About this RNA: The data come from the RNA Mapping Database (RMDB), libraries RFM100 and RFMREP. This 177-nucleotide RNA was probed chemically with DMS and 2A3. For DMS the reverse transcriptase was MarathonRT. For 2A3 the reverse transcriptase was SuperScript II with manganese.

RNA sequence: GGGAACGACUCGAGUAGAGUCGAAAAGUCCGACAAAAUGAAAGGUCAAGUUAAGUGGUUCAACGAGUCUAAAGGCUUCGGUUUCAUCACUCCUGCUGAUGGUAGCAAAGACGUUUUCGUUCACUUCACCCAUUGAGGUUUUCGAACCUCAAUGGGUAAAAGAAACAACAACAACAAC
Reactivity to DMS in 0.01 (KOAc 150mM, MgCl2 10mM, bicine 150mM(pH8.5), 24C), signal-to-noise 3, nucleotides 027 to 126: g010u010c020c010g010a120c180a060a110a070a060u050g020a080a080a050g020g020u010c020a080a120g000u010u020a090a040g020u010g020g000u000u000c110a090a040c050g000a050g000u040c000u040a080a070a130g000g000c020u020u030c030g030g000u010u000u000c080a030u000c040a020c050u000c080c050u000g010c100u000g020a050u020g030g030u020a020g000c080a040a060a100g010a040c060g030u000u000u000u000c210g030u000u000c030a020c020u000u000c300
Reactivity to 2A3 in 0.01 (KOAc 150mM, MgCl2 10mM, bicine 150mM(pH8.5), 24C), signal-to-noise 3, nucleotides 027 to 126: g080u000c000c000g070a030c090a030a090a010a030u280g030a080a020a020g020g030u020c050a040a080g020u050u110a060a000g030u010g010g030u010u000c000a000a010c020g020a000g000u010c020u200a170a220a150g100g040c000u080u100c050g070g000u010u000u070c010a010u010c000a000c010u050c010c010u090g050c030u050g010a130u160g070g080u120a010g010c000a000a000a080g010a020c060g020u010u010u010u010c020g020u000u040c050a070c100u100u060c030